[RMDB]
RNA sequence: GGGAACGACUCGAGUAGAGUCGAAAACACCCGCAAUUCGUUGCGGGUGAGAGCACCACUCCUGCGCGAGUUAAGGCCAUACGGACAGCCGGGUGCAAAGCCAUAGCAGGUCCUUCGGGACCUGCAACGCAUAGUAUAUCUUCGGAUAUACUAUGCGAAAAGAAACAACAACAACAAC
Reactivity to DMS in 0.01 (KOAc 150mM, MgCl2 10mM, bicine 150mM(pH8.5), 24C), signal-to-noise 7, nucleotides 027 to 126: c010a010c000c000c000g010c010a010a010u000u010c160g020u000u000g020c000g010g000g010u000g000a010g000a080g000c020a020c010c010a090c010u000c000c010u010g020c280g010c140g000a030g010u000u010a090a060g010g020c000c020a100u000a060c150g000g000a040c050a140g000c010c010g000g000g000u000g010c010a060a030a130g000c010c020a060u000a120g010c000a010g000g000u000c000c000u000u020c150g010g010g000a010c000c000u000g010c000a010a040
Reactivity to 2A3 in 0.01 (KOAc 150mM, MgCl2 10mM, bicine 150mM(pH8.5), 24C), signal-to-noise 8, nucleotides 027 to 126: c000a000c000c010c000g000c000a010a040u090u080c190g080u070u020g000c010g000g000g000u010g000a010g020a000g000c010a000c010c000a010c000u030c010c040u300g120c100g040c150g060a010g010u040u220a180a060g000g000c000c000a040u040a070c050g020g010a010c010a010g010c010c010g030g000g000u010g000c010a020a010a000g020c010c000a030u100a030g000c000a000g000g000u000c010c000u050u100c220g060g000g000a010c000c000u000g000c000a000a000

This 177-nucleotide RNA was probed chemically with DMS and 2A3. Reactivities are given for positions 27 through 126. 2A3 adducts were read by reverse transcription with SuperScript II with manganese.